[RMDB]
RNA sequence: GGGAACGACUCGAGUAGAGUCGAAAAUGCCGACAGGAAAGGGGCCAUCUUGGCCCCUUUUUCGUGGGCGGUGGUGUAGCCGUGCGGCUCGUGAAGGAACGCCGCGGGACCGCUCCUUUGCCCGAAGAAUCUCUGCAUGAUUCGUCAUGCAGAGAUUAAAAGAAACAACAACAACAAC
Reactivity to DMS in 0.01 (KOAc 150mM, MgCl2 10mM, bicine 150mM(pH8.5), 24C), signal-to-noise 3, nucleotides 027 to 126: u030g010c000c010g000a050c020a080g010g010a010a000a000g000g000g000g030c010c000a130u050c250u020u030g010g000c000c000c000c000u010u000u000u010u000c040g030u020g000g000g020c000g020g010u030g000g020u010g000u020a090g020c050c010g010u030g020c030g000g020c020u020c100g020u020g020a220a170g010g010a080a080c160g010c030c020g000c000g000g000g010a060c050c010g000c030u000c060c020u010u020u040g000c010c000c000g010a140a070g010
Chemical mapping of a 177-nucleotide RNA with DMS.